[RMDB]
RNA sequence: GGGAACGACUCGAGUAGAGUCGAAAAGAAAGAAAGAAAGCCGGCUUCCCUCGUCGCUGAGGCAGGACCGACUUCCCUCAUGGCCGAGGCAGGACCGGCUUCCCUCAUGGCCGAGGCAGACCCGGAAUACGGCAAAAUUAUUCGUAAUUUUGCCGUAAAAAGAAACAACAACAACAAC
Reactivity to DMS in 0.01 (KOAc 150mM, MgCl2 10mM, bicine 150mM(pH8.5), 24C), signal-to-noise 6, nucleotides 027 to 126: g000a090a110a100g010a080a040a070g010a110a050a020g010c010c000g000g000c030u000u020c300c000c010u000c010g000u010c070g000c080u000g020a030g000g020c300a030g000g000a190c180c120g000a070c030u000u000c250c000c000u000c040a020u040g000g020c080c010g000a030g000g010c150a050g000g000a100c010c010g000g000c010u000u000c010c000c000u010c050a120u020g000g020c050c030g010a040g000g000c080a080g000a150c010c020c010g000g000a100a130
Reactivity to 2A3 in 0.01 (KOAc 150mM, MgCl2 10mM, bicine 150mM(pH8.5), 24C), signal-to-noise 4, nucleotides 027 to 126: g070a000a010a000g090a020a060a010g080a040a070a000g010c000c000g030g000c040u030u050c010c010c010u000c000g050u040c020g020c150u020g020a000g020g000c070a030g070g040a060c070c120g110a130c050u060u040c020c010c010u030c010a070u120g070g000c050c030g000a000g000g000c040a010g000g070a150c000c000g000g000c010u010u010c000c000c000u020c010a040u080g120g000c030c040g010a060g000g000c040a030g030a090c010c010c000g010g020a040a050
This 177-nucleotide RNA was probed chemically with DMS and 2A3. The 2A3 profile rests on 4,564 reads. Conditions: 150 mM KOAc, 10 mM MgCl2 and 150 mM bicine (pH 8.5), 24 C. 2A3 adducts were read by reverse transcription with SuperScript II with manganese. Source: RMDB libraries RFM100 and RFMREP, as collected in RNAgym.